[RMDB]
The data come from the RNA Mapping Database (RMDB), library M2PK50. Structure probing data (2A3 and DMS) for a 177-nucleotide construct.
RNA sequence: GGGAACGACUCGAGUAGAGUCGAAAAUGCCAGGGGUUCGCCCCUGGCACAUUACCGAGAAAGCAGCUGGGUAUAAAACUGCAACCCUUGGAAACAAGGGAAACUUUGACACAUUCGUGUGUCAAAAGACUGUUAUAAAGUUCGCUUUAUAACAGUCAAAAGAAACAACAACAACAAC
Reactivity to 2A3 in 0.01 (KOAc 150mM, MgCl2 10mM, bicine 150mM(pH8.5), 24C), signal-to-noise 5, nucleotides 027 to 126: u010g000c000c000a000g000g020g000g020u060u070c160g090c010c010c000c000u000g000g000c000a000c000a000u000u030a030c000c010g020a030g050a100a170a010g020c020a000g010c040u140g100g020g180u200a140u090a230a130a020a020c000u020g010c020a050a160c000c000c000u000u000g010g010a040a040a020c000a000a000g010g000g000a030a010a000c010u030u010u020g000a000c000a000c000a020u040u110c190g070u030g000u000g000u010c000a000a000a000a010
Reactivity to DMS in 0.01 (KOAc 150mM, MgCl2 10mM, bicine 150mM(pH8.5), 24C), signal-to-noise 4, nucleotides 027 to 126: u010g000c000c000a020g010g010g000g010u000u010c280g010c000c000c000c000u000g000g000c010a000c030a030u000u010a190c020c000g030a140g010a090a130a110g010c010a020g030c050u000g010g010g020u010a120u000a050a060a080a070c020u000g000c020a160a180c010c000c000u000u000g000g000a150a080a230c000a000a010g000g000g010a030a040a040c160u000u000u010g000a010c000a010c000a030u000u000c210g010u000g010u010g000u000c000a010a010a040a150